An RNA of 177 nucleotides, treated with DMS and 2A3 and read out base by base. 2A3 adducts were read by reverse transcription with SuperScript II with manganese. The RNA was probed in 150 mM KOAc, 10 mM MgCl2 and 150 mM bicine (pH 8.5) at 24 C. The DMS profile rests on 1,450 reads.
[RMDB]
RNA sequence: GGGAACGACUCGAGUAGAGUCGAAAACUGCAUCAGCGCGUACUAGGCCGGCCGGAUCUGCGCGAUCCGGUACGUACCGUACGUGCGCGAGGUACCUAGCGUACCGGUACGUGCGCUCACUAUAGGCGCGCAUGCACGAAUUCGUUCGUGCAUGCGCAAAAGAAACAACAACAACAAC
Reactivity to DMS in 0.01 (KOAc 150mM, MgCl2 10mM, bicine 150mM(pH8.5), 24C), signal-to-noise 2, nucleotides 027 to 126: c080u000g010c100a040u010c140a140g050c000g020c050g000u010a010c000u000a160g020g000c300c020g020g000c000c000g000g000a040u000c000u010g030c230g050c170g020a000u000c000c020g000g000u000a000c000g000u000a060c100c030g030u000a030c090g020u000g000c000g000c100g010a110g010g030u000a030c020c030u020a110g020c110g010u000a010c000c010g000g010u000a050c080g030u020g030c030g040c060u020c040a050c110u000a070u010a030g000g000c150
Reactivity to 2A3 in 0.01 (KOAc 150mM, MgCl2 10mM, bicine 150mM(pH8.5), 24C), signal-to-noise 1, nucleotides 027 to 126: c010u030g030c020a100u040c080a090g000c000g020c000g000u000a010c010u090a070g000g000c020c050g000g000c000c000g000g010a000u000c020u100g120c090g100c120g250a000u000c020c000g000g040u040a040c000g020u030a080c000c020g000u020a020c000g020u000g010c010g030c010g000a100g020g020u020a040c000c030u050a000g020c000g120u000a000c010c000g000g030u040a010c010g000u020g020c000g010c010u090c010a070c050u110a010u100a190g130g000c000